The record gives the reactivity of an RNA of 177 nucleotides to 2A3. Source: RMDB library OK1LIB, as collected in RNAgym. For 2A3 the reverse transcriptase was SuperScript II with manganese.
[RMDB]
RNA sequence: GGGAACGACUCGAGUAGAGUCGAAAAGCUCACCGAGGGUAUGCGGUUCGACAAGGGCUACAUCUCGGGGUACUUCGUGACCGACCCGGAGCGUCAGGAGGCGGUCCUGGAGGACCCCUACAUCCUGGUGCAACAUGUCGUUCGCGACAUGUUGCACAAAAGAAACAACAACAACAAC
Reactivity to 2A3 in 0.01 (KOAc 150mM, MgCl2 10mM, bicine 150mM(pH8.5), 24C), signal-to-noise 3, nucleotides 027 to 126: g000c040u000c010a070c000c000g000a040g020g050g100u130a050u110g030c060g020g070u040u090c020g060a050c110a090a170g010g000g020c020u050a030c040a120u040c030u040c070g000g010g010g000u020a030c000u010u030c030g030u030g010a020c000c010g070a240c010c020c040g130g020a180g060c070g050u090c060a090g000g090a090g000g000c050g010g000u000c020c000u080g050g000a070g000g000a060c010c000c000c000u000a010c000a040u050c000c060u050g050